[RMDB]
RNA sequence: GGGAACGACUCGAGUAGAGUCGAAAAGAUAUGGAGUCCCUGGUAGGGAGAUGUCUGGUCGGAAACGACCAGCAUCAUCGAUCUACAGGGACUCCUAAGUCAAAACUCGGAGCUUCGGCUCCGAGAAGUGAUUACCUAGGUUCGCCUAGGUAAUCACAAAAGAAACAACAACAACAAC
Reactivity to DMS in 0.01 (KOAc 150mM, MgCl2 10mM, bicine 150mM(pH8.5), 24C), signal-to-noise 2, nucleotides 027 to 126: g000a040u000a300u020g000g000a020g000u000c000c000c000u010g030g040u000a010g040g010g020a250g010a010u010g000u000c010u000g000g000u010c000g010g000a050a030a180c000g000a010c010c000a000g000c270a040u010c000a070u010c090g010a300u010c000u000a010c000a010g010g020g000a000c000u000c000c000u000a000a090g000u010c030a110a100a120a170c010u000c000g000g010a040g030c000u000u000c300g010g010c000u000c000c000g000a000g000a020a060
Reactivity to 2A3 in 0.01 (KOAc 150mM, MgCl2 10mM, bicine 150mM(pH8.5), 24C), signal-to-noise 2, nucleotides 027 to 126: g020a030u080a010u080g000g000a000g000u000c020c000c000u020g280g120u080a030g030g010g180a180g000a070u020g120u000c010u020g000g010u000c000g030g050a060a040a070c000g000a000c010c000a000g000c020a010u060c000a000u060c020g050a090u070c000u000a010c010a000g030g000g020a010c000u000c000c000u000a000a000g010u000c010a000a010a030a150c020u000c010g000g010a010g010c000u130u180c300g210g030c000u000c010c000g000a000g000a000a010
Source: RMDB library TTRDES, as collected in RNAgym. This 177-nucleotide RNA was probed chemically with DMS and 2A3. The 2A3 profile rests on 2,950 reads. Conditions: 150 mM KOAc, 10 mM MgCl2 and 150 mM bicine (pH 8.5), 24 C. The DMS profile rests on 1,490 reads. DMS (dimethyl sulfate) methylates the pairing face of unpaired adenines and cytosines.